Background
Chemical mapping of a 177-nucleotide RNA with DMS and 2A3. Source: RMDB library OK1LIB, as collected in RNAgym.
RNA sequence: GGGAACGACUCGAGUAGAGUCGAAAAGAAAAAGGAAAACCUGGAAAAGAAAAUCCAGGACCAAGGAACAAACCGUGAAAGACGCGAAGGACGCAAGAACGAGUCCACGGAACUUGCGUGAAGAAAAACGUAGUACCAUAUUCGUAUGGUACUACGUAAAAGAAACAACAACAACAAC
Reactivity to DMS in 0.01 (KOAc 150mM, MgCl2 10mM, bicine 150mM(pH8.5), 24C), signal-to-noise 5, nucleotides 027 to 126: g010a060a090a060a160a140g000g010a100a090a110a120c000c010u010g000g000a020a060a090a220g020a190a140a190a070u000c000c000a010g010g010a070c010c010a140a070g000g000a070a100c120a050a100a120c120c010g000u000g010a070a090a060g000a060c030g020c100g020a070a100g030g000a030c000g030c020a020a020g010a050a130c020g020a120g000u010c030c060a050c040g000g000a060a130c020u000u000g010c000g020u010g010a080a110g030a030a070a050a070
Reactivity to 2A3 in 0.01 (KOAc 150mM, MgCl2 10mM, bicine 150mM(pH8.5), 24C), signal-to-noise 4, nucleotides 027 to 126: g070a020a050a000a000a010g070g000a050a060a000a010c000c000u010g030g110a070a090a100a090g190a090a150a080a070u010c020c010a000g010g000a000c010c000a030a030g080g000a010a140c090a120a100a000c040c010g020u020g060a120a060a030g090a020c030g000c040g050a030a060g110g020a000c010g000c010a030a000g010a020a020c030g030a020g060u030c020c040a030c030g010g020a040a060c000u020u000g000c030g010u040g050a040a080g080a060a080a030a000

For 2A3, 5,246 sequencing reads were counted. For DMS the reverse transcriptase was MarathonRT. As a SHAPE reagent, 2A3 marks flexible, mostly unpaired nucleotides at the ribose 2'-OH.